[RMDB]
RNA sequence: GGGAACGACUCGAGUAGAGUCGAAAAGAUAUGGACAUGGCCAACGCGAUAAGCUAGGGUUCGGAAACGAACCUAGCUUUUGACGCGUUGGUGUCCUAAGUCAAACAAUCACCUUCGGGUGAUUGAACGCCAAAUACUCGUUCGCGAGUAUUUGGCGAAAAGAAACAACAACAACAAC
Reactivity to DMS in 0.01 (KOAc 150mM, MgCl2 10mM, bicine 150mM(pH8.5), 24C), signal-to-noise 1, nucleotides 027 to 126: g010a100u010a300u040g000g010a010c000a140u010g200g000c010c000a000a010c010g020c000g020a160u000a000a000g000c000u000a000g010g010g010u000u010c000g050g000a070a130a190c000g000a000a030c000c000u000a000g000c010u000u000u010u000g020a130c080g010c000g020u000u000g000g000u000g000u010c000c020u010a000a130g000u000c000a110a070a270c090a000a000u000c010a010c000c000u000u000c220g050g040g010u000g010a010u000u000g010a090a140
Reactivity to 2A3 in 0.01 (KOAc 150mM, MgCl2 10mM, bicine 150mM(pH8.5), 24C), signal-to-noise 1, nucleotides 027 to 126: g030a010u050a010u080g000g000a000c080a090u210g300g000c020c010a000a000c010g000c000g070a040u000a280a000g000c000u020a050g140g130g120u050u030c000g010g040a030a080a070c000g010a000a010c000c000u020a000g070c000u040u040u010u120g130a080c030g020c040g000u020u000g000g000u000g000u000c000c000u020a110a010g000u010c030a020a050a130c000a000a010u010c000a000c000c020u090u130c300g130g000g000u000g000a020u000u010g010a110a010